[RMDB]
RNA sequence: GGGAACGACUCGAGUAGAGUCGAAAAGCAGUAUCUCGUUAGGCGAGGCUCCUAUACAAACACAGGUUGAUGAUCUGACGACGUCGAGAGACGCCCAAGAUUAGGACAGGAUAUAUCGAACCAAGGUGAACCUGUCCAGGGUUCGCCCUGGACAGAAGCUUGAAUACUAGUUCGCUAGUAUUCAAGCAAAAGAAACAACAACAACAAC
Reactivity to 2A3 in 0.01 (KOAc 150mM, MgCl2 10mM, bicine 150mM(pH8.5), 24C), signal-to-noise 4, nucleotides 027 to 156: g030c030a000g040u150a150u080c030u010c020g050u070u180a110g040g070c020g020a010g040g000c020u060c000c010u130a140u080a230c130a050a160a010c060a000c020a100g000g040u030u040g030a040u030g000a010u000c010u040g030a030c050g020a040c000g010u030c010g000a010g000a000g010a100c010g000c010c020c010a040a020g040a090u060u110a040g000g050a030c060a060g040g040a030u070a030u020a020u190c070g070a030a010c000c010a050a020g060g010u050g020a040a050c010c000u000g010u010c000c000a000g010g000g010u010u030c040g040c000c000c000u000g000g010a000c000a010g010a010a020
Reactivity to DMS in 0.01 (KOAc 150mM, MgCl2 10mM, bicine 150mM(pH8.5), 24C), signal-to-noise 2, nucleotides 027 to 156: g000c070a150g010u010a060u010c020u000c030g000u000u000a080g030g020c040g000a110g020g010c030u000c000c060u000a070u000a190c080a100a070a150c060a130c080a100g030g000u000u010g000a180u010g000a030u010c000u000g020a180c030g000a010c000g030u000c010g020a300g010a300g010a040c000g010c000c020c120a160a070g010a080u000u010a050g040g000a090c050a120g040g000a060u010a050u000a060u000c060g000a070a100c010c010a070a130g000g030u020g000a030a140c050c000u000g010u000c020c010a020g040g030g050u000u000c240g020c030c000c000u000g020g000a060c030a020g000a010a060